RNA sequence: GGGAACGACUCGAGUAGAGUCGAAAACAGGGAAGAGAACCAGGUUGCCCACCGGCGGCACCUCGCACCUCGCCCUGACCACAAGCACGUGCGCCCAACCCGCCUCGCACCCCGGCCCGGGUAGGGGGCUCAGGGGACUCCCGGGGCACUCAGGAGGCUCGUACGUUAAUUUCGAUUAACGUACGAGAAAAGAAACAACAACAACAAC
Reactivity to 2A3 in 0.01 (KOAc 150mM, MgCl2 10mM, bicine 150mM(pH8.5), 24C), signal-to-noise 1, nucleotides 027 to 156: c020a020g010g000g040a200a120g030a080g020a040a080c020c010a010g000g000u130u140g000c030c010c090a120c140c210g170g020c220g070g000c010a020c020c000u050c060g010c010a010c030c000u000c020g010c010c000c030u000g020a040c020c020a040c120a100a040g090c110a010c180g070u060g040c120g000c000c070c000a070a060c010c020c000g030c040c020u000c020g040c030a080c000c020c030c040g030g000c000c000c000g090g010g000u020a040g030g060g020g000g010c040u100c080a110g020g010g010g090a100c040u040c010c020c010g000g020g010g000c000a040c010u070c040a080g070g080a030g170g000